An RNA of 177 nucleotides, treated with 2A3 and DMS and read out base by base. The RNA was probed in 150 mM KOAc, 10 mM MgCl2 and 150 mM bicine (pH 8.5) at 24 C. Reactivities are given for positions 27 through 126. It was measured as part of the RMDB library OK2TST.
[RMDB]
RNA sequence: GGGAACGACUCGAGUAGAGUCGAAAAGGGUGCGCCGCUGAAAUGAACUUCUUCCUGGAGGUGCCCGAUGUGCCCGAACUGCCCGAUCACGGGCAAGCAGUCGUUUCACGGACGGGCUGAAGCACUGCGCACCAGUCAUAUUCGUAUGACUGGUGCGAAAAGAAACAACAACAACAAC
Reactivity to 2A3 in 0.01 (KOAc 150mM, MgCl2 10mM, bicine 150mM(pH8.5), 24C), signal-to-noise 2, nucleotides 027 to 126: g000g040g020u030g000c030g010c050c040g000c060u050g010a010a090a130u180g020a070a040c040u020u000c010u060u070c060c120u100g050g040a070g020g030u020g010c050c030c000g010a040u070g050u100g090c020c010c000g040a060a030c050u060g000c020c020c000g020a140u270c090a060c220g000g000g010c010a010a010g030c000a000g010u060c040g030u040u090u030c070a060c040g050g070a040c060g070g020g000c050u020g020a030a000g020c000a000c070u040g020
Reactivity to DMS in 0.01 (KOAc 150mM, MgCl2 10mM, bicine 150mM(pH8.5), 24C), signal-to-noise 3, nucleotides 027 to 126: g010g010g010u000g000c040g020c010c070g030c040u000g020a040a060a090u020g010a140a130c150u000u000c010u000u000c000c050u010g010g010a100g000g030u000g000c040c030c040g010a130u010g020u000g000c080c080c000g000a100a220c150u010g000c010c000c000g010a220u010c270a110c090g000g000g010c010a000a020g030c070a010g000u000c080g000u000u000u000c010a080c050g020g000a170c130g020g000g000c130u010g000a060a040g000c050a060c080u000g000